[RMDB]
RNA sequence: GGGAACGACUCGAGUAGAGUCGAAAAAAAGACCACCGCGCGUUACGCUGGGCCACCACCAGCUCCGCCAGCCGUUCGAAGACGACCGCCAGGAUCAGCAGGUAGUACACGGCCCUACCACCUAAGAAAGUGACAUGCUUUUCGAAGCAUGUCACUUAAAAGAAACAACAACAACAAC
Reactivity to DMS in 0.01 (KOAc 150mM, MgCl2 10mM, bicine 150mM(pH8.5), 24C), signal-to-noise 1, nucleotides 027 to 126: a020a030a070g010a180c080c010a170c050c020g000c030g040c000g000u010u010a020c110g020c070u000g000g010g020c040c080a000c100c030a060c080c030a070g000c020u000c040c000g020c040c070a080g040c040c020g040u010u010c070g010a060a130g000a090c040g010a110c040c110g000c040c050a110g000g000a080u020c070a090g000c110a050g000g000u010a040g010u000a030c110a080c190g010g000c000c120c010u000a050c080c050a100c050c040u010a000a050g000a040